RNA sequence: GGGAACGACUCGAGUAGAGUCGAAAAGGGCCAGCGGAGGGCACGGCUCCUGCCAGCAGGACAGUAUGGAUGGCACACCCGCCGAACACUGCGGGCCGAGUGUUGGGGCUUGGAGACCCCAUGGGGAAUCAUUACUUAUGUUCGCAUAAGUAAUGAUAAAAGAAACAACAACAACAAC
Reactivity to 2A3 in 0.01 (KOAc 150mM, MgCl2 10mM, bicine 150mM(pH8.5), 24C), signal-to-noise 9, nucleotides 027 to 126: g040g000g020c020c010a020g010c050g030g040a080g050g020g010c070a020c040g030g000c020u030c010c010u030g040c010c010a040g020c020a020g030g100a080c020a040g090u130a080u140g050g080a100u050g030g000c020a020c020a030c050c010c010g000c010c010g020a070a020c070a010c050u060g000c020g010g010g000c020c020g040a050g020u110g050u030u060g020g000g000g000c030u060u130g110g020a070g030a080c000c010c000c010a020u060g010g000g000g010a040
Reactivity to DMS in 0.01 (KOAc 150mM, MgCl2 10mM, bicine 150mM(pH8.5), 24C), signal-to-noise 9, nucleotides 027 to 126: g010g000g010c030c040a070g020c060g010g010a110g010g000g010c080a080c100g000g010c030u000c050c060u000g010c020c040a090g010c040a050g000g000a120c140a100g010u010a070u000g010g000a130u010g010g010c040a080c110a140c100c050c060g020c020c040g000a090a080c120a070c050u000g010c030g010g000g010c040c090g000a090g010u010g000u000u000g010g010g000g010c060u000u010g010g010a150g000a200c020c010c000c020a030u000g000g000g000g000a250